Chemical mapping of a 177-nucleotide RNA with DMS and 2A3. The reactions ran in a buffer of 150 mM KOAc, 10 mM MgCl2 and 150 mM bicine (pH 8.5), at 24 C. The 2A3 profile rests on 1,685 reads.
[RMDB]
RNA sequence: GGGAACGACUCGAGUAGAGUCGAAAACUUCACCUGCCUCGGCGGCGCGGUCGUCCUGUUGUUCCUGGUGGGACUGGUCACCGGUCGAAGCCGCGUCUAGCGGUCCAGCGCGGGUGAUGUGCCGCCACCAUAGCCUGAGUUUCGACUCAGGCUAUGGAAAAGAAACAACAACAACAAC
Reactivity to DMS in 0.01 (KOAc 150mM, MgCl2 10mM, bicine 150mM(pH8.5), 24C), signal-to-noise 2, nucleotides 027 to 126: c060u010u000c030a030c030c010u000g010c020c030u000c130g020g000c020g010g000c050g030c050g010g010u010c100g020u020c000c010u000g030u010u000g010u000u000c010c010u030g000g010u010g000g000g000a090c060u010g020g020u000c020a040c020c030g000g020u000c030g010a200a240g010c000c000g000c000g000u020c170u010a100g030c010g000g010u000c040c040a100g000c240g010c000g010g020g010u000g010a010u000g010u000g010c110c100g020c030c060a190
Reactivity to 2A3 in 0.01 (KOAc 150mM, MgCl2 10mM, bicine 150mM(pH8.5), 24C), signal-to-noise 1, nucleotides 027 to 126: c000u030u020c010a020c020c010u040g010c050c000u100c110g090g010c040g040g040c070g000c000g140g030u040c070g000u010c020c020u100g050u120u150g030u060u010c020c000u070g120g000u140g060g000g080a050c040u040g050g080u080c080a030c040c020g030g000u040c000g040a060a010g020c020c000g000c010g000u070c100u060a040g020c050g030g000u060c000c010a120g000c100g000c070g110g000g000u010g000a000u010g010u080g020c000c040g080c050c010a020